[RMDB]
RNA sequence: GGGAACGACUCGAGUAGAGUCGAAAAUGCGUUUCAACCUGCGUGGGUUGAGGCGGCUUAGCGGAUUAGGGCGUUCUGCCCCAGUGGUACCAUUACCCUAUGCAAAGUCUGCAUGCAGGCAGGGUAGUGUGCUGCUCGGGCACAACUGGUCGAGAGCGGAUUUAUUCUACUUCGGUAGAAUAAAUCCAAAAGAAACAACAACAACAAC
Reactivity to 2A3 in 0.01 (KOAc 150mM, MgCl2 10mM, bicine 150mM(pH8.5), 24C), signal-to-noise 7, nucleotides 027 to 156: u120g000c010g010u000u020u030c020a030a020c010c000u140g140c210g170u300g040g010g000u020u010g010a010g000g010c030g040g020c040u070u080a060g070c030g110g050a120u090u140a120g060g030g050c050g020u070u020c040u050g000c000c000c000c010a000g000u020g000g010u020a030c090c030a010u000u010a000c010c000c020u040a070u110g060c070a090a070a080g070u080c080u070g050c060a130u100g030c010a030g120g000c020a000g010g000g000u000a000g000u010g000u010g010c010u000g000c000u010c010g000g000g000c000a010c000a020a040c030u090g050g020u070c060g050a020g000a010g190c060
Reactivity to DMS in 0.01 (KOAc 150mM, MgCl2 10mM, bicine 150mM(pH8.5), 24C), signal-to-noise 2, nucleotides 027 to 156: u010g000c000g040u000u000u010c000a010a060c000c010u000g040c270g050u000g010g010g050u000u000g010a050g040g030c030g030g010c080u000u000a060g010c050g000g010a140u020u000a100g010g030g030c020g010u000u010c090u000g010c020c000c000c040a020g020u010g000g000u000a040c180c060a060u000u010a020c010c010c010u000a140u010g000c070a160a120a190g020u010c070u000g010c080a230u010g010c020a050g020g060c100a060g020g020g020u000a020g040u000g050u010g020c000u000g000c060u010c100g000g040g000c020a040c000a060a060c020u000g010g010u010c030g010a130g010a190g010c170